An RNA of 177 nucleotides, treated with DMS and read out base by base.
RNA sequence: GGGAACGACUCGAGUAGAGUCGAAAACGCACCGCCCAACUGCAGCCAGCAGGUGCCGCUGGCUCCAAAGGACAGUCGCGCCUGUUUCGUCCCGCAGUCCCAAUGGCGUUGGGCGUGGCACUCGCAAAUCGAGGAUGCCAUUCGUGGCAUCCUCGAUAAAAGAAACAACAACAACAAC
Reactivity to DMS in 0.01 (KOAc 150mM, MgCl2 10mM, bicine 150mM(pH8.5), 24C), signal-to-noise 1, nucleotides 027 to 126: c100g000c020a050c010c000g000c000c000c000a030a060c070u000g030c070a060g010c030c090a100g000c000a030g030g010u000g020c000c090g000c000u000g000g050c000u010c100c190a040a180a250g000g000a040c010a030g010u000c300g010c010g010c040c020u000g030u000u000u000c080g020u030c020c010c100g000c070a060g000u000c020c010c040a040a060u010g000g090c090g010u010u010g030g030g000c050g080u000g000g000c010a130c040u000c010g060c190a050a080

Reactivities are given for positions 27 through 126. The reactions ran in a buffer of 150 mM KOAc, 10 mM MgCl2 and 150 mM bicine (pH 8.5), at 24 C.